Overview
Source: RMDB library RFM100, as collected in RNAgym. Structure probing data (2A3) for a 177-nucleotide construct.
RNA sequence: GGGAACGACUCGAGUAGAGUCGAAAAAGCGACGAUACGUCGUCGCAAACUCAGAGUACAUACUUCUUUAUGUACCCAUAUGAACAUACAAUGCUAUGGAAUGUAAAGAAGUAUGUAUUUUUGGUAAGAGCAGAGGCGUAUUCGUACGCCUCUGCUCAAAAGAAACAACAACAACAAC
Reactivity to 2A3 in 0.01 (KOAc 150mM, MgCl2 10mM, bicine 150mM(pH8.5), 24C), signal-to-noise 2, nucleotides 027 to 126: a030g070c000g000a010c000g000a000u060a060c170g130u030c000g010u000c000g020c000a010a050a050c080u080c000a000g000a000g010u000a000c030a000u000a000c000u000u040c000u000u000u000a000u020g010u180a180c000c000c000a010u010a030u190g090a080a030c000a020u220a070c130a300a190u140g010c040u000a030u000g010g000a010a040u150g000u000a000a000a000g000a000a000g000u000a000u000g050u000a000u000u060u000u000u000g110g010u050a010a000
For 2A3, 669 sequencing reads were counted.